[RMDB]
RNA sequence: GGGAACGACUCGAGUAGAGUCGAAAAUGCACAGCCAAAUUCUACCAAAGCUACAAAGUACUGGUACCAAUGCCCACUGCAAUGCUUCCAAAACUUCAAUGAGAAGGGAAGCCUCCCUGACUCAUUCUACAGUGCCAGUAUUAUUCUGAUACUAAAAGAGCAGUAUAAAUUUCGAUUUAUACUGCUCAAAAGAAACAACAACAACAAC
Reactivity to 2A3 in 0.01 (KOAc 150mM, MgCl2 10mM, bicine 150mM(pH8.5), 24C), signal-to-noise 2, nucleotides 027 to 156: u130g030c000a010c030a060g040c030c010a000a090a090u100u020c050u040a130c060c100a130a090a020g070c050u070a080c050a080a150a000g000u000a030c000u010g010g020u000a000c000c030a080a010u080g030c020c020c010a020c040u030g000c020a060a070u050g010c000u040u000c030c010a050a080a120a160c090u130u100c070a060a120u130g000a020g010a070a010g050g010g010a040a050g010c000c050u020c000c010c000u040g110a200c000u000c020a010u080u010c000u050a120c020a040g030u010g040c010c000a000g020u000a020u000u030a020u100u080c020u040g060a060u040a230c060u110a030a070a100a050
Reactivity to DMS in 0.01 (KOAc 150mM, MgCl2 10mM, bicine 150mM(pH8.5), 24C), signal-to-noise 2, nucleotides 027 to 156: u000g030c030a080c050a090g020c080c030a060a090a150u000u000c030u000a150c030c020a010a200a120g050c050u000a140c090a070a080a100g040u000a110c060u000g030g040u000a050c020c010a030a090u000g010c050c020c000a140c070u000g020c000a110a050u000g010c000u000u010c010c000a050a060a070a210c100u000u000c040a050a060u010g000a050g030a300a080g000g010g000a030a180g000c210c090u000c040c000c010u000g000a280c020u000c020a050u000u000c100u010a050c080a050g000u000g010c030c010a020g000u000a040u000u010a140u000u000c020u000g000a110u000a130c020u000a050a060a070a190

Chemical mapping of a 207-nucleotide RNA with 2A3 and DMS.
DMS (dimethyl sulfate) methylates the pairing face of unpaired adenines and cytosines.
The RNA was probed in 150 mM KOAc, 10 mM MgCl2 and 150 mM bicine (pH 8.5) at 24 C.
For 2A3 the reverse transcriptase was SuperScript II with manganese.